Source information:
This 207-nucleotide RNA was probed chemically with 2A3. Conditions: 150 mM KOAc, 10 mM MgCl2 and 150 mM bicine (pH 8.5), 24 C. For 2A3 the reverse transcriptase was SuperScript II with manganese. The 2A3 profile rests on 748 reads. Reactivities are given for positions 27 through 156.

[RMDB]
RNA sequence: GGGAACGACUCGAGUAGAGUCGAAAAGUCAGCCAGGCUAGAGUGCAGUGGCAUGAUCUUGGCUCAUUACAAGCUCUGCCUCCUGAGCUCAAGCAAUUCUUCUGCCUCAGCCUCCCGAGUAGCUGGGAUUACAGGCGUGUGCCACCACGCCUGGCUAGUGGGAAAAUAGGUUCGCCUAUUUUCCCACAAAAGAAACAACAACAACAAC
Reactivity to 2A3 in 0.01 (KOAc 150mM, MgCl2 10mM, bicine 150mM(pH8.5), 24C), signal-to-noise 2, nucleotides 027 to 156: g080u080c020a010g080c020c040a020g000g020c000u070a130g020a000g030u140g050c010a050g040u020g020g000c040a050u090g030a080u080c030u020u000g000g000c030u000c020a030u150u280a160c150a110a000g020c020u240c190u300g050c060c010u020c030c020u060g020a000g050c070u090c300a020a010g020c050a030a030u040u000c010u040u020c010u020g030c000c020u030c020a010g000c000c010u030c000c000c010g030a050g030u120a020g030c020u020g000g010g060a060u130u110a110c010a000g010g000c020g000u000g030u050g230c020c000a030c030c000a010c000g010c070c000u000g000g000c000u030a040